[RMDB]
Structure probing data (2A3 and DMS) for a 177-nucleotide construct. High 2A3 reactivity points to a flexible backbone, as in loops and unpaired stretches. The reactions ran in a buffer of 150 mM KOAc, 10 mM MgCl2 and 150 mM bicine (pH 8.5), at 24 C.
RNA sequence: GGGAACGACUCGAGUAGAGUCGAAAAGAUAUGGAAUUGGAACUACAUCCACAAGGUUCAAUGAUGUCGGAAACGAUUGAGAACUGUGGAUGCCAAUUCCUAAGUCAAACUGUCGUUCGCGACAGAAGCCCUUAUUACACUUCGGUGUAAUAAGGGCAAAAGAAACAACAACAACAAC
Reactivity to 2A3 in 0.01 (KOAc 150mM, MgCl2 10mM, bicine 150mM(pH8.5), 24C), signal-to-noise 3, nucleotides 027 to 126: g050a010u100a040u140g000g010a010a020u020u030g040g020a060a040c110u220a030c300a010u000c010c010a030c070a120a130g300g000u000u020c030a070a240u300g070a030u160g030u020c010g000g010a000a090a080c020g020a020u020u160g050a100g020a050a020c010u030g000u000g000g000a000u000g000c000c000a000a000u000u020c010c000u000a050a010g030u000c030a090a070a140c010u000g020u010c000g030u100u130c300g000c020g160a010c000a030g030a070a020
Reactivity to DMS in 0.01 (KOAc 150mM, MgCl2 10mM, bicine 150mM(pH8.5), 24C), signal-to-noise 1, nucleotides 027 to 126: g000a030u000a300u000g000g000a000a000u000u000g010g000a170a020c110u010a300c020a020u000c000c000a000c000a120a120g030g080u020u020c000a250a070u000g000a080u000g000u000c020g000g000a110a000a140c020g020a040u040u000g020a120g000a000a000c040u000g000u000g000g020a010u000g000c000c000a030a020u000u000c000c020u020a020a110g000u000c070a120a100a150c010u000g030u010c000g060u000u010c230g020c060g020a020c020a020g010a070a070